An RNA of 207 nucleotides, treated with 2A3 and read out base by base.
RNA sequence: GGGAACGACUCGAGUAGAGUCGAAAAAGCCAUACCAUUACGAUGGUAUGGCAAGUCCGUGACGGCGAUGGAUCCCGCCUGGCCGAUGCCGAACUGCCGAUCUGGCUGAUGGUUCCUGCCACGUCAAAAAACGUAAAGCACUUCGGUGCUUUACGAACAAAUGUUCGUCGUUCGCGACGAACAUUUGAAAAGAAACAACAACAACAAC
Reactivity to 2A3 in 0.01 (KOAc 150mM, MgCl2 10mM, bicine 150mM(pH8.5), 24C), signal-to-noise 1, nucleotides 027 to 156: a000g000c010c000a010u000a000c000c000a030u030u010a060c240g040a020u000g000g000u000a020u010g000g030c000a000a000g010u030c010c010g020u020g040a050c070g000g010c070g060a090u080g000g030a040u070c030c000c000g020c030c030u030g020g020c040c000g040a030u120g120c040c030g140a240a140c100u140g020c010c010g060a080u030c050u060g010g000c030u030g030a160u070g050g000u000u090c020c020u030g010c000c060a060c030g000u020c020a080a070a050a040a000a010c020g000u010a000a000a000g000c000a000c010u010u110c210g100g000u000g000c000u010u000u000a000c000g000a000a000
For 2A3 the reverse transcriptase was SuperScript II with manganese. The reactions ran in a buffer of 150 mM KOAc, 10 mM MgCl2 and 150 mM bicine (pH 8.5), at 24 C.